[RMDB]
RNA sequence: GGGAACGACUCGAGUAGAGUCGAAAACACAAUGUGCGCCAUUAACAUUGUUUAUGCAAGCACGUUUCGCAAUGUACGGCGCAGAAACAUUGCCAACACAAAUACGCUUCACGAUGUGCGGCACACAAAAAGCUCGCGCACUUCGGUGCGCGAGCAAGACUUUAAUUUACUUCGGUAAAUUAAAGUCAAAAGAAACAACAACAACAAC
Reactivity to 2A3 in 0.01 (KOAc 150mM, MgCl2 10mM, bicine 150mM(pH8.5), 24C), signal-to-noise 1, nucleotides 027 to 156: c060a020c040a070a300u090g010u000g000c020g010c000c010a080u140u150a080a000c000a020u010u000g050u060u200u140a130u180g050c130a050a090g020c040a040c120g000u000u050u050c020g050c000a000a020u030g020u060a100c120g030g130c130g080c050a000g020a000a140a000c010a000u000u000g010c000c020a110a020c020a080c010a080a200a070u240a100c090g010c050u040u020c040a020c070g070a050u040g000u000g010c000g010g060c010a000c000a000c010a020a090a020a010a000g010c020u020c140g000c010g030c000a000c010u060u080c130g060g000u020g000c000g010c000g000a000g000c000a000a000